RNA sequence: GGGAACGACUCGAGUAGAGUCGAAAACUGUGUCACCAUAGUGGAUGGGAAAGCAUGCAUGACAUCGUUAAUGCAUGAGUUCAAGAUGAACGUACGGAAACCAUCCGUGGCAUGCGAAAGGAUGGGCGAUAGGUUCGUGUAUGCGGUCAUUAGAAUCACUACCGCGAGACUUCGGUCUCGCGGUAGUAAAAGAAACAACAACAACAAC
Reactivity to 2A3 in 0.01 (KOAc 150mM, MgCl2 10mM, bicine 150mM(pH8.5), 24C), signal-to-noise 1, nucleotides 027 to 156: c000u010g020u000g000u190c080a050c150c000a020u000a020g060u120g060g000a040u080g000g000g060a090a000a000g080c000a020u060g000c000a000u040g000a060c000a110u100c090g050u020u120a270a060u120g000c000a040u090g000a040g050u000u000c070a100a060g080a240u190g000a160a080c020g050u120a020c050g050g120a010a010a000c000c000a000u000c000c000g000u000g040g000c070a110u070g000c040g080a060a100a000g170g020a000u150g030g000g000c000g040a080u050a070g000g220u000u050c070g000u040g000u030a030u000g000c010g030g000u000c030a060u000u250a030g140a120a100u160c020